[RMDB]
RNA sequence: GGGAACGACUCGAGUAGAGUCGAAAAGGUCAGGAGAUCGAGACCAUCCUGGCUAACACGGUGAAACCCUGUUUCUACUAAAAAAUACAAAAAAUUAGCUGGGUGUGGUGGCGGGCACCUGUAGUCCUGACACGUAUAUCUUCGGAUAUACGUGUCAAAAAGAAACAACAACAACAAC
Reactivity to DMS in 0.01 (KOAc 150mM, MgCl2 10mM, bicine 150mM(pH8.5), 24C), signal-to-noise 1, nucleotides 027 to 126: g000g000u000c000a020g000g000a030g020a110u010c020g000a060g020a060c030c070a050u000c010c000u000g000g000c020u000a030a050c130a070c120g000g020u000g000a020a060a030c010c040c100u000g000u000u000u000c000u020a060c050u030a010a000a040a070a080a050u030a060c050a020a060a050a050a060a110u010u010a070g020c060u000g020g000g010u000g030u000g010g020u000g000g000c060g010g000g000c020a030c040c020u000g000u000a080g000u020c010c010